[RMDB]
This 177-nucleotide RNA was probed chemically with 2A3 and DMS. 2A3 adducts were read by reverse transcription with SuperScript II with manganese. DMS adducts were read by reverse transcription with MarathonRT.

RNA sequence: GGGAACGACUCGAGUAGAGUCGAAAACGGAUAGGUCAUUGUAUCAUCUUGUGUCCAAAGGAAUGCCAUUUGAUAUUUCUUUCUGGAACGGGGACACGGCUGAGUUCAAAUAUCCAUAUGAUCAUCCCAGUCCUUGGUUGUUCGCAACCAAGGACUGAAAAGAAACAACAACAACAAC
Reactivity to 2A3 in 0.01 (KOAc 150mM, MgCl2 10mM, bicine 150mM(pH8.5), 24C), signal-to-noise 2, nucleotides 027 to 126: c070g000g000a000u040a080g030g090u040c070a040u010u080g040u020a060u050c030a030u040c020u200u300g040u000g020u000c010c000a040a070a000g030g030a030a040u080g000c060c030a170u160u120u300g090a040u040a010u100u070u000c000u010u060u070c120u200g150g010a140a120c050g030g060g060g020a000c000a000c010g040g000c000u020g030a010g060u100u170c070a050a060a020u130a040u070c060c010a020u090a030u160g060a020u040c000a020u010c000c020
Reactivity to DMS in 0.01 (KOAc 150mM, MgCl2 10mM, bicine 150mM(pH8.5), 24C), signal-to-noise 2, nucleotides 027 to 126: c240g000g000a020u000a130g030g000u000c070a090u000u000g010u000a090u030c010a030u010c000u000u010g000u000g010u020c010c020a130a050a020g020g000a020a020u000g030c060c070a250u000u000u000g020a050u000a020u000u000u000c010u000u000u000c220u010g020g030a300a080c200g010g000g060g000a050c020a020c040g000g000c050u010g000a070g000u010u000c120a020a060a120u000a060u000c130c050a050u000a100u000g000a050u000c050a110u000c020c000